An RNA of 207 nucleotides, treated with DMS and 2A3 and read out base by base. For DMS the reverse transcriptase was MarathonRT. Conditions: 150 mM KOAc, 10 mM MgCl2 and 150 mM bicine (pH 8.5), 24 C. For DMS, 3,785 sequencing reads were counted. It was measured as part of the RMDB library OK3TST. Reactivities are rounded to 0.1 and cut off at 0 and 3. 2A3 adducts were read by reverse transcription with SuperScript II with manganese.

RNA sequence: GGGAACGACUCGAGUAGAGUCGAAAAAAACUUUUAAUGGUCGUCUCGACGAUUGACCCCGUUUGAACGAGAAGCGCAAAGUCCGUAUUUUUAAUGUCGUAGACCUUAGGGGAAUCUAGCAAGACGCUCAAACCGGACAUGUAGCCACCAAAAAUAGUAUUUGAAUAGGAUUCGUCCUAUUCAAAUAAAAAGAAACAACAACAACAAC
Reactivity to DMS in 0.01 (KOAc 150mM, MgCl2 10mM, bicine 150mM(pH8.5), 24C), signal-to-noise 2, nucleotides 027 to 156: a070a040a090c030u000u000u010u000a060a100u000g010g030u000c010g000u000c050u000c060g020a140c130g000a150u000u000g020a170c040c030c030c000g030u000u000u000g010a060a040c040g000a150g020a110a120g030c020g000c030a040a060a110g010u010c020c000g000u000a060u000u000u020u000u030a070a060u010g000u000c020g020u000a050g000a050c040c010u030u000a090g020g000g010g000a170a150u000c010u000a090g010c090a070a090g000a070c020g010c050u000c080a040a030a070c130c040g020g010a050c020a170u000g020u010a100g010c010c020a050c020c010a020a080a060a060a110u000a110g020
Reactivity to 2A3 in 0.01 (KOAc 150mM, MgCl2 10mM, bicine 150mM(pH8.5), 24C), signal-to-noise 3, nucleotides 027 to 156: a000a000a010c200u250u110u010u050a130a090u120g030g000u030c020g030u030c030u030c100g040a050c000g030a030u010u220g120a070c010c000c010c030g020u050u090u170g070a050a020c030g010a010g030a200a040g020c010g000c050a090a100a030g020u000c010c010g040u060a140u050u150u010u050u120a140a070u120g030u020c000g010u020a020g030a080c030c020u010u110a060g010g040g000g040a030a090u010c000u000a010g070c030a100a060g040a030c010g010c040u040c100a050a060a030c040c000g000g000a000c000a010u050g020u040a050g000c020c010a020c020c020a050a030a040a000a080u210a080g090